The record gives the reactivity of an RNA of 177 nucleotides to 2A3. 2A3 adducts were read by reverse transcription with SuperScript II with manganese. Source: RMDB library OK1LIB, as collected in RNAgym.
[RMDB]
RNA sequence: GGGAACGACUCGAGUAGAGUCGAAAAGAGUAAGGCGGCCACAGCAGAAGCGUUCAUGUCGCAGCCGCUGUCAGAUUCUGGUGUAUCUGCGAAUUCUGCUGAAGAGCACGGAAUAGGACCGUGCAAAACGGUGAGCUAUCUUCGGAUAGCUCACCGUAAAAGAAACAACAACAACAAC
Reactivity to 2A3 in 0.01 (KOAc 150mM, MgCl2 10mM, bicine 150mM(pH8.5), 24C), signal-to-noise 1, nucleotides 027 to 126: g040a000g090u060a160a090g040g000c010g000g000c010c000a070c010a110g090c000a000g000a000a040g020c020g020u110u140c140a140u300g300u270c010g000c040a060g030c010c000g000c000u000g050u050c000a010g010a010u130u020c000u210g120g060u240g020u060a030u110c000u000g000c000g010a000a000u040u000c000u030g060c000u000g010a130a000g000a000g000c020a000c000g000g000a000a070u010a140g130g000a010c000c000g000u000g000c000a010a030a000